The record gives the reactivity of an RNA of 177 nucleotides to DMS and 2A3. It was measured as part of the RMDB library M2PK50. For 2A3 the reverse transcriptase was SuperScript II with manganese. In probing experiments dimethyl sulfate is read out at A N1 and C N3, which are open when not base-paired. Conditions: 150 mM KOAc, 10 mM MgCl2 and 150 mM bicine (pH 8.5), 24 C.
RNA sequence: GGGAACGACUCGAGUAGAGUCGAAAAUAGCUGACGUUCGCGUCAGCUAAAAGCACCAAAACCUGCUGGCGGUGCGGCGCCGGCCCCGCCGGGAAGGCCGCCAACUCGAUGGGUUCGCCCAUCGAAAAUAUGCUUAAGGGUUCGCCCUUAAGCAUAUAAAAGAAACAACAACAACAAC
Reactivity to DMS in 0.01 (KOAc 150mM, MgCl2 10mM, bicine 150mM(pH8.5), 24C), signal-to-noise 3, nucleotides 027 to 126: u010a010g000c000u010g010a020c000g030u000u010c140g040c000g030u000c000a000g010c000u000a000a020a070a110g010c130a140c040c020a120a060a110a160c120c060u010g010c050u000g010g010c030g020g010u010g020c020g000g010c080g000c020c010g010g010c040c030c240c070g010c040c010g010g000g020a140a120g000g010c010c010g020c020c030a050a040c080u000c010g010a010u000g000g000g010u000u010c170g010c000c010c000a010u010c010g000a010a040a110
Reactivity to 2A3 in 0.01 (KOAc 150mM, MgCl2 10mM, bicine 150mM(pH8.5), 24C), signal-to-noise 2, nucleotides 027 to 126: u060a000g000c000u010g010a010c010g020u040u040c280g040c000g110u000c010a000g010c000u000a000a000a010a010g020c040a070c040c050a040a050a080a140c030c050u110g040c020u040g060g000c010g030g010u120g290c010g040g020c050g080c000c030g020g000c000c040c060c170g070c000c000g000g000g000a040a010g070g010c000c010g010c020c000a000a000c020u000c010g000a010u000g050g000g000u030u040c200g130c010c000c000a010u000c000g000a010a000a000